[RMDB]
RNA sequence: GGGAACGACUCGAGUAGAGUCGAAAACGGCGAGCGUGAAAAAACUUGCUACAAUCAUUUUCGUACCAGUGCGUUCCUCCAAACCACCACGCUCACGUUGAUGCGAAGUUGGUCUGAAGGAGUUCAUCAGCAUGCCGAUAUUCGUAUCGGCAUGCUGAAAAGAAACAACAACAACAAC
Reactivity to 2A3 in 0.01 (KOAc 150mM, MgCl2 10mM, bicine 150mM(pH8.5), 24C), signal-to-noise 1, nucleotides 027 to 126: c000g000g000c260g000a000g000c090g040u000g070a170a030a030a000a000a000c000u010u090g000c000u030a050c060a180a110u060c060a130u000u130u130u060c140g000u120a020c000c020a000g080u040g120c000g040u000u040c000c000u000c010c020a000a000a000c040c000a000c100c070a060c070g000c000u000c000a090c000g100u060u160g140a160u150g040c000g010a090a000g040u020u000g060g020u000c000u130g120a070a060g050g000a030g040u000u080c060a000u000